[RMDB]
Notes: The data come from the RNA Mapping Database (RMDB), library OK1LIB. The record gives the reactivity of an RNA of 177 nucleotides to DMS and 2A3. 2A3 adducts were read by reverse transcription with SuperScript II with manganese. Conditions: 150 mM KOAc, 10 mM MgCl2 and 150 mM bicine (pH 8.5), 24 C.
RNA sequence: GGGAACGACUCGAGUAGAGUCGAAAAGACACGCUUCGCAGAUGACCUCCUCGUUGGUGAGUGUCGGUAAUGUUGUCAGUCACAGGCAACAGUUAACGAUCUGCCUAAAUAAAAAGAGAAGAACAAACGCAUUAUAUAUGUUCGCAUAUAUAAUGCGAAAAGAAACAACAACAACAAC
Reactivity to DMS in 0.01 (KOAc 150mM, MgCl2 10mM, bicine 150mM(pH8.5), 24C), signal-to-noise 8, nucleotides 027 to 126: g000a080c030a030c030g010c030u010u010c140g000c040a020g010a050u010g010a070c020c010u010c070c000u000c070g010u030u020g000g020u000g010a060g010u010g010u000c010g000g010u010a060a060u010g000u010u000g000u010c010a060g020u030c240a130c260a120g000g010c000a000a020c020a020g010u020u000a030a030c030g000a020u000c000u000g010c000c160u040a040a060a060u050a040a070a060a100a080g010a110g000a070a080g000a070a090c180a050a090a180
Reactivity to 2A3 in 0.01 (KOAc 150mM, MgCl2 10mM, bicine 150mM(pH8.5), 24C), signal-to-noise 9, nucleotides 027 to 126: g040a010c020a010c050g050c030u080u100c060g010c040a010g010a120u040g040a070c000c010u030c000c010u060c050g110u080u140g030g030u080g110a080g010u130g020u010c010g000g020u070a060a040u020g000u000u000g010u000c020a030g140u140c060a050c040a110g010g000c000a000a000c000a030g040u010u060a020a020c020g010a010u000c000u020g000c000c000u210a180a170a100u280a070a090a050a020a000g130a010g040a130a010g050a080a020c050a090a050a010